RNA sequence: GGGAACGACUCGAGUAGAGUCGAAAACCACUGCUCGAGGACGUCCUCCCUGUCUCCUCGGUUCUUCUUCGAUCCGGACCGGCUCAUCUCGGCAAGGGGCGGCAGUCCUCAGUACUCUUACUCUUUCAUCCUUGACGGUUCGCCGUCAAGAAAAGAAACAACAACAACAAC
Reactivity to 2A3 in 0.01 (KOAc 150mM, MgCl2 10mM, bicine 150mM(pH8.5), 24C), signal-to-noise 9, nucleotides 027 to 129: c010c010a060c070u040g000c000u070c150g000a010g020g010a030c000g050u050c000c000u020c000c000c000u010g030u000c070u050c050c020u070c020g020g020u020u000c010u150u020c020u100u120c130g130a150u040c040c050g010g010a020c010c000g020g000c040u050c060a170u020c090u050c050g010g000c040a090a100g020g000g000g000c060g010g000c040a090g010u010c000c000u010c000a000g010u020a080c020u030c020u120u110a120c030u030c030u060u090u070c050a090u070c030
Reactivity to DMS in 0.01 (KOAc 150mM, MgCl2 10mM, bicine 150mM(pH8.5), 24C), signal-to-noise 7, nucleotides 027 to 129: c050c040a030c100u060g020c000u040c130g000a000g020g060a040c000g030u040c030c050u000c020c000c040u000g040u050c050u020c080c030u040c000g000g080u040u010c000u100u030c080u040u050c040g080a160u080c060c040g020g010a150c080c040g000g000c100u060c070a100u000c060u000c060g050g030c120a120a110g000g000g000g000c130g030g050c090a090g040u030c030c020u020c000a060g030u000a050c070u070c080u070u090a070c080u000c060u030u040u030c090a090u060c050